[RMDB]
RNA sequence: GGGAACGACUCGAGUAGAGUCGAAAACACGUCGAACCGGUUCACGCCUGAUAGACCGGUGAGACGUAACUUCAUCAGGCUGGCAUCUGACGGCGCUCGCCGCGAAGGGUGCGAGAAAAACAGGUGAGCUGGUCGAAGGUUGCCUGGUCGGGGGCGACAAUGCCUCUUUGUUCGCAAAGAGGCAUUGAAAAGAAACAACAACAACAAC
Reactivity to DMS in 0.01 (KOAc 150mM, MgCl2 10mM, bicine 150mM(pH8.5), 24C), signal-to-noise 1, nucleotides 027 to 156: c080a300c000g000u000c000g020a300a010c010c000g000g000u010u000c000a080c030g030c040c000u020g030a070u000a300g010a020c000c020g030g090u000g020a300g000a040c020g000u010a010a030c050u030u000c110a090u000c030a070g000g000c000u000g020g060c020a070u000c000u010g020a300c070g000g000c090g010c110u010c070g040c010c020g020c030g040a110a230g020g010g010u000g000c060g060a130g000a070a070a050a090a220c020a260g000g020u010g020a070g030c030u000g020g030u010c060g000a070a140g000g000u000u000g000c020c050u000g000g000u000c020g050g000g000g000g000c000g000a090
Reactivity to 2A3 in 0.01 (KOAc 150mM, MgCl2 10mM, bicine 150mM(pH8.5), 24C), signal-to-noise 2, nucleotides 027 to 156: c090a000c000g000u000c000g000a010a010c000c000g000g010u060u040c050a020c090g010c020c010u010g000a020u010a050g020a010c000c000g000g000u000g000a000g020a000c000g000u000a000a010c030u210u190c010a050u000c020a000g030g000c030u020g030g000c010a010u010c010u050g040a070c050g010g070c050g000c090u070c080g000c010c000g020c050g000a080a020g080g020g000u080g000c060g000a030g030a020a060a000a020a010c060a010g000g040u050g030a020g030c010u050g140g050u100c030g050a050a010g030g020u020u030g010c020c010u010g060g010u110c040g010g030g000g010g020c010g020a000

Chemical mapping of a 207-nucleotide RNA with DMS and 2A3.
As a SHAPE reagent, 2A3 marks flexible, mostly unpaired nucleotides at the ribose 2'-OH.
High DMS reactivity at an A or C suggests that its Watson-Crick edge is free.
Conditions: 150 mM KOAc, 10 mM MgCl2 and 150 mM bicine (pH 8.5), 24 C.
The 2A3 profile rests on 1,452 reads.
It was measured as part of the RMDB library RSTRND.